[RMDB]
RNA sequence: GGGAACGACUCGAGUAGAGUCGAAAAGAUAGGGGGUUCGCCCCCUAUCAAAGGUGCAAUGUACUUUCUCCACCAAAGACGGAAAAACCGUCAAAGUACAAAAAACGAUGGCGUUCGCGCCAUCGAACACCUAGGUAGUGUUCGCACUACCUAGGUGAAAAGAAACAACAACAACAAC
Reactivity to 2A3 in 0.01 (KOAc 150mM, MgCl2 10mM, bicine 150mM(pH8.5), 24C), signal-to-noise 1, nucleotides 027 to 126: g000a000u000a030g020g000g020g030g010u000u000c050g070c070c010c000c000c000u010a000u010c000a000a000a010g030g000u100g070c050a080a240u110g000u010a010c020u030u020u010c060u020c020c010a020c010c000a110a040a000g040a010c010g000g000a150a110a080a120a140c000c000g000u000c000a000a040a000g000u010a010c020a000a160a020a010a010a020c040g000a000u000g010g050c050g040u050u100c290g020c000g000c070c010a000u010c000g000a020a000
Reactivity to DMS in 0.01 (KOAc 150mM, MgCl2 10mM, bicine 150mM(pH8.5), 24C), signal-to-noise 1, nucleotides 027 to 126: g000a010u000a000g000g000g010g020g020u000u030c250g080c000c020c000c020c000u000a000u000c000a020a250a070g000g000u000g070c200a110a040u000g010u020a010c010u000u020u000c020u000c040c000a260c080c010a020a040a110g000a000c000g000g000a040a130a150a160a220c000c000g010u000c020a040a040a060g000u010a000c020a000a050a050a040a100a190c090g000a000u000g000g020c000g050u000u020c270g010c000g000c000c000a010u000c000g000a110a050

Source information
The record gives the reactivity of an RNA of 177 nucleotides to 2A3 and DMS. The reactions ran in a buffer of 150 mM KOAc, 10 mM MgCl2 and 150 mM bicine (pH 8.5), at 24 C. The DMS profile rests on 607 reads. Values cover nucleotides 27 to 126. DMS adducts were read by reverse transcription with MarathonRT.